[RMDB]
RNA sequence: GGGAACGACUCGAGUAGAGUCGAAAAAGAUAUCCCACUUGAUAAUCUAUUUAUCUGGGCUCGAUUUCUGGCAGGGAGGCCAAAGAGAAAUUCUAACUUCAUUGUCUUCAGGGAGGGAGGGCAGAUGUCCCCCGUCUAUGUUCGCAUAGACGGGGGAAAAAGAAACAACAACAACAAC
Reactivity to 2A3 in 0.01 (KOAc 150mM, MgCl2 10mM, bicine 150mM(pH8.5), 24C), signal-to-noise 2, nucleotides 027 to 126: a000g070a090u080a040u140c000c010c000a000c020u000u020g050a000u000a060a050u050c100u290a300u080u080u000a050u060c030u050g010g040g020c020u000c000g010a030u000u230u000c010u000g000g010c000a020g000g040g000a000g000g010c010c010a000a140a000g140a000g000a030a260a100u280u120c040u070a110a300c060u030u020c050a140u060u070g040u020c010u110u150c070a060g000g010g010a130g040g020g010a170g000g040g000c010a000g000a090u080g040
Reactivity to DMS in 0.01 (KOAc 150mM, MgCl2 10mM, bicine 150mM(pH8.5), 24C), signal-to-noise 1, nucleotides 027 to 126: a170g020a210u020a020u000c010c020c000a220c230u050u030g010a030u000a000a000u040c270u090a060u020u030u000a030u000c020u060g000g040g030c100u010c050g000a130u000u000u000c090u000g060g070c090a030g000g000g000a180g010g000c030c180a000a110a090g000a090g000a010a020a080u070u050c230u030a210a080c050u000u000c060a010u000u050g000u000c140u030u000c210a100g010g050g000a020g000g000g000a130g000g000g000c100a020g000a020u000g000